Annotation: Structure probing data (2A3 and DMS) for a 177-nucleotide construct. For 2A3 the reverse transcriptase was SuperScript II with manganese. The data come from the RNA Mapping Database (RMDB), libraries RFM100 and RFMREP. For DMS the reverse transcriptase was MarathonRT.

[RMDB]
RNA sequence: GGGAACGACUCGAGUAGAGUCGAAAAAUCUUGGUUUUUUCCUGAUUAAAUAGUUGACUCUGGCCCAUAUAUGCCGAAAAGGCAAGUUUUUUUGAUGUUAUAUAGGAAAAGUCAAAUGUCCGACAAAACGUAUAUCCGUUUUCGAACGGAUAUACGUAAAAGAAACAACAACAACAAC
Reactivity to 2A3 in 0.01 (KOAc 150mM, MgCl2 10mM, bicine 150mM(pH8.5), 24C), signal-to-noise 4, nucleotides 027 to 126: a000u030c030u010u090g050g000u090u010u010u030u110u000c010c010u020g090a130u080u180a030a030a100u180a090g110u050u070g020a030c000u000c030u090g060g000c000c000c030a050u090a010u030a030u140g000c000c000g030a060a210a050a080g010g000c010a000a020g000u000u040u000u000u030u110u080g080a080u080g040u150u050a110u020a050u070a130g050g020a030a030a000a020g020u000c010a010a030a040u120g040u000c020c000g030a050c100a010a090a000
Reactivity to DMS in 0.01 (KOAc 150mM, MgCl2 10mM, bicine 150mM(pH8.5), 24C), signal-to-noise 4, nucleotides 027 to 126: a020u010c020u000u000g000g000u000u000u010u000u020u000c000c010u010g020a090u030u010a070a080a090u010a090g020u030u000g010a070c060u000c030u020g010g010c000c030c040a070u000a070u020a080u000g000c020c010g010a060a030a090a130g000g000c010a050a050g000u000u000u000u000u010u010u000g000a040u020g010u000u020a050u030a100u030a040g010g000a020a020a020a090g000u010c040a030a020a050u000g010u000c000c010g000a120c210a040a030a100